The record gives the reactivity of an RNA of 177 nucleotides to 2A3 and DMS. The reactions ran in a buffer of 150 mM KOAc, 10 mM MgCl2 and 150 mM bicine (pH 8.5), at 24 C. In probing experiments dimethyl sulfate is read out at A N1 and C N3, which are open when not base-paired. Reactivities are given for positions 27 through 126.
RNA sequence: GGGAACGACUCGAGUAGAGUCGAAAAGAUAUGGAUCUGUGUUAAGUGCCAUUGGUCGGAAACGACCACUGGCUCAAACCAGAUCCUAAGUCAAACGAUUACAACAAGUUCGCUUGUUGUAAUCGAAGUCAUUUAAAUCGUUCGCGAUUUAAAUGACAAAAGAAACAACAACAACAAC
Reactivity to 2A3 in 0.01 (KOAc 150mM, MgCl2 10mM, bicine 150mM(pH8.5), 24C), signal-to-noise 6, nucleotides 027 to 126: g010a010u040a010u070g000g000a000u000c010u010g130u010g090u300u110a300a200g130u120g150c010c000a000u000u010g010g000u000c010g010g010a050a030a040c000g000a000c000c000a000c010u000g000g000c030u030c020a000a010a000c010c000a000g000a010u000c000c000u010a020a010g020u010c020a010a090a120c010g010a010u010u000a000c000a000a000c000a000a000g020u060u110c300g090c160u010u000g000u000u000g000u000a000a000u000c000g000a020a010
Reactivity to DMS in 0.01 (KOAc 150mM, MgCl2 10mM, bicine 150mM(pH8.5), 24C), signal-to-noise 4, nucleotides 027 to 126: g000a020u000a240u020g000g010a000u000c000u000g020u010g010u000u010a090a150g010u010g020c000c010a020u000u000g010g030u010c000g010g000a050a060a130c010g010a020c000c000a000c080u000g010g000c000u000c060a070a070a020c010c000a010g000a010u000c000c000u000a010a060g000u010c020a090a120a240c020g000a010u000u000a010c000a000a010c000a010a010g000u010u020c250g010c010u000u000g010u010u000g000u000a000a000u000c000g010a050a060